[RMDB]
RNA sequence: GGGAACGACUCGAGUAGAGUCGAAAAGAGCAGCUGCGCGCCUACGUGACGCCCGAAGCGCGCCACGUGGCCGUCGAUGAGAAGUACGUCACCGCGUGCGCCUCAGAGGCUCUGGCUCUCGUCGGGCUGAGAUCGUACGUUUCGACGUACGAUCUCAAAAAGAAACAACAACAACAAC
Reactivity to DMS in 0.01 (KOAc 150mM, MgCl2 10mM, bicine 150mM(pH8.5), 24C), signal-to-noise 3, nucleotides 027 to 126: g020a050g000c060a080g000c090u010g000c060g000c210g010c030c010u010a040c030g010u000g000a020c010g020c000c020c120g000a150a100g020c230g040c000g000c030c010a000c030g000u000g010g000c050c020g000u000c070g010a210u000g000a010g000a050a150g010u010a020c020g030u000c140a170c300c270g010c010g000u000g010c000g020c170c020u000c010a040g030a280g000g000c010u010c030u010g010g010c030u000c040u000c090g000u020c050g000g000g000c090
Reactivity to 2A3 in 0.01 (KOAc 150mM, MgCl2 10mM, bicine 150mM(pH8.5), 24C), signal-to-noise 2, nucleotides 027 to 126: g040a020g010c010a010g000c060u060g000c010g040c040g000c020c030u080a030c010g020u020g030a020c040g050c010c070c140g190a150a060g070c080g020c040g000c090c000a000c020g040u030g020g000c000c000g030u000c040g070a060u090g000a040g020a080a010g040u100a030c010g030u050c070a010c090c080g000c010g010u020g010c020g030c000c010u020c020a020g030a040g040g020c000u000c010u060g040g030c000u000c030u020c070g090u000c000g000g050g000c060